[RMDB]
RNA sequence: GGGAACGACUCGAGUAGAGUCGAAAAGUUGUAAUGUAUAGUGUUGGAGAAAGUGAAAGACUUGCGGAAGUAAUUGCCGACAAGUGCCCAAGGGAAGAGCCAGCAUGUUAAGUUACCACCCAGUAAUCCAUGAGGGAUUGUUCGCAAUCCCUCAUGGAAAAGAAACAACAACAACAAC
Reactivity to 2A3 in 0.01 (KOAc 150mM, MgCl2 10mM, bicine 150mM(pH8.5), 24C), signal-to-noise 3, nucleotides 027 to 126: g230u220u160g000u000a060a010u040g040u020a010u030a040g000u000g010u000u000g040g000a060g140a140a140a050g150u210g070a080a040a040g000a000c000u000u000g000c000g000g030a000a000g020u300a130a150u070u300g060c010c010g050a110c010a010a050g020u030g000c040c000c010a060a120g070g000g030a120a020g050a010g080c000c000a000g000c000a000u030g040u090u040a060a010g000u000u000a010c000c020a050c070c000c000a020g060u080a080a010u030